[RMDB]
RNA sequence: GGGAACGACUCGAGUAGAGUCGAAAAUUGGAGGGCAAGUUUGGUGCCAGCAGCCGCGGUAAUACCGACUCCAAGAGUGUGUAUGAGAGAUGCUGCAGUUAAAAAGUCCGUAGUCAUAGAAGGGCAACCCUUAACUAGAGUUCGCUCUAGUUAAGGGAAAAGAAACAACAACAACAAC
Reactivity to 2A3 in 0.01 (KOAc 150mM, MgCl2 10mM, bicine 150mM(pH8.5), 24C), signal-to-noise 2, nucleotides 027 to 126: u100u040g050g020a050g030g000g010c070a090a080g060u110u120u120g060g000u060g050c070c020a040g020c020a000g050c030c050g000c070g020g000u020a060a020u040a120c000c040g050a050c010u000c000c020a070a030g040a010g040u080g010u030g000u000a080u080g110a140g020a010g000a050u040g030c010u000g000c000a030g030u120u110a100a110a050a030a000g020u000c020c010g060u090a020g010u030c040a070u040a190g100a080a050g080g000g020c000a030a040
Reactivity to DMS in 0.01 (KOAc 150mM, MgCl2 10mM, bicine 150mM(pH8.5), 24C), signal-to-noise 4, nucleotides 027 to 126: u000u000g010g000a110g010g010g000c060a060a070g010u000u000u010g010g010u010g000c040c040a100g010c050a050g000c030c070g020c050g000g000u000a080a050u010a300c060c010g000a100c020u000c030c080a070a140g010a090g020u010g000u010g000u000a040u000g020a120g010a110g010a060u000g000c020u000g010c010a080g010u000u000a020a030a080a120a090g000u010c020c040g000u000a090g000u000c060a080u000a120g000a070a090g000g000g020c100a110a150
An RNA of 177 nucleotides, treated with 2A3 and DMS and read out base by base. 2A3 adducts were read by reverse transcription with SuperScript II with manganese. Conditions: 150 mM KOAc, 10 mM MgCl2 and 150 mM bicine (pH 8.5), 24 C.